An RNA of 207 nucleotides, treated with 2A3 and read out base by base. Values cover nucleotides 27 to 156.
[RMDB]
RNA sequence: GGGAACGACUCGAGUAGAGUCGAAAAGUAUUGAAUAAUACAACCUUCUUCCACUGCCGUGAAAUGUCAACAGCUGCUCUCCCACUAGAUAGGGCGUAGCUUUCCACAGACGUGAAAACAUCGCUGUGGUCCAUCUCUAUUUACUGCAAGCAGAAGAGCCCAUACGUACGUUCGCGUACGUAUGGGCAAAAGAAACAACAACAACAAC
Reactivity to 2A3 in 0.01 (KOAc 150mM, MgCl2 10mM, bicine 150mM(pH8.5), 24C), signal-to-noise 1, nucleotides 027 to 156: g010u040a020u090u070g080a120a040u250a240a010u030a010c020a040a040c010c000u150u040c060u020u020c030c000a010c070u060g060c010c010g070u070g120a000a030a140u080g010u040c060a060a050c010a040g000c040u000g000c000u070c040u050c000c010c000a060c050u150a120g050a130u100a060g030g000g000c000g080u070a000g000c050u080u100u030c030c020a030c010a040g130a210c030g000u020g010a050a000a030a000c040a070u110c030g030c000u000g000u010g000g000u000c000c030a220u040c160u010c010u070a090u070u070u040a070c010u010g070c010a000a150g040c020a000g000a090a000g000a100
Source: RMDB library OK3TST, as collected in RNAgym. The RNA was probed in 150 mM KOAc, 10 mM MgCl2 and 150 mM bicine (pH 8.5) at 24 C. 2A3 adducts were read by reverse transcription with SuperScript II with manganese.